[RMDB]
RNA sequence: GGGAACGACUCGAGUAGAGUCGAAAAUGAUCGAGAGAUCUAACGAUGUACGCGAGUCAAGUGCACAGACUCGAGCGAAAGCUCGGUCGAAAGACCGCGUACAUCGGUCGGCUGGUGUACAGUCGACCAGCCCAGUCAUAUUCGUAUGACUGGGCUGAAAAGAAACAACAACAACAAC
Reactivity to DMS in 0.01 (KOAc 150mM, MgCl2 10mM, bicine 150mM(pH8.5), 24C), signal-to-noise 5, nucleotides 027 to 126: u010g000a010u010c000g000a290g000a240g010a010u000c000u010a100a170c040g010a010u010g010u000a000c000g020c020g000a040g000u000c000a070a100g010u010g040c120a070c140a260g000a010c000u010c010g010a000g000c000g000a100a090a140g010c000u000c000g010g000u000c000g010a110a080a100g000a010c000c010g010c010g020u000a010c000a000u000c010g000g010u000c010g010g000c000u000g000g020u010g000u010a120c010a050g010u000c000g000a050c060
Reactivity to 2A3 in 0.01 (KOAc 150mM, MgCl2 10mM, bicine 150mM(pH8.5), 24C), signal-to-noise 4, nucleotides 027 to 126: u120g000a000u000c010g010a000g000a010g000a130u000c000u040a090a050c050g000a000u000g000u010a000c000g020c010g030a080g050u000c010a050a080g190u160g190c140a080c030a140g000a000c030u060c210g000a000g010c010g050a110a010a000g000c010u000c010g000g000u000c010g010a020a010a000g000a000c000c000g000c000g000u010a000c000a000u000c000g000g010u010c000g000g000c000u020g000g070u210g080u270a080c010a000g000u010c000g010a000c010